[RMDB]
Chemical mapping of a 177-nucleotide RNA with 2A3.
Values are in units of 0.01, from 0 to 300, in steps of 10.
For 2A3 the reverse transcriptase was SuperScript II with manganese.
RNA sequence: GGGAACGACUCGAGUAGAGUCGAAAAUGAUCGUUCCAACGUGGAGUUAUUGAAACGAACUCGUGCCGAUUCAAUGUUUCCUUCUUUACUCGGAAUGAGCUCCACAAUUUUGCCCAGAGGCCAUGUGCGUGCUGCAGCGAUUCGUCGCUGCAGCACGAAAAGAAACAACAACAACAAC
Reactivity to 2A3 in 0.01 (KOAc 150mM, MgCl2 10mM, bicine 150mM(pH8.5), 24C), signal-to-noise 2, nucleotides 027 to 126: u300g010a130u000c020g000u070u000c090c000a120a030c040g020u050g010g010a050g000u090u140a070u030u030g030a050a030a000c080g030a070a110c030u000c100g030u090g000c000c010g110a100u000u000c080a000a010u180g040u160u080u000c000c000u110u130c000u040u220u140a000c020u050c000g000g000a030a030u170g000a030g000c000u020c030c000a010c000a000a000u060u190u180u150g030c000c010c030a000g000a100g100g020c030c000a160u100g060u190g080
Description
The 2A3 profile rests on 454 reads. Source: RMDB library OK1LIB, as collected in RNAgym.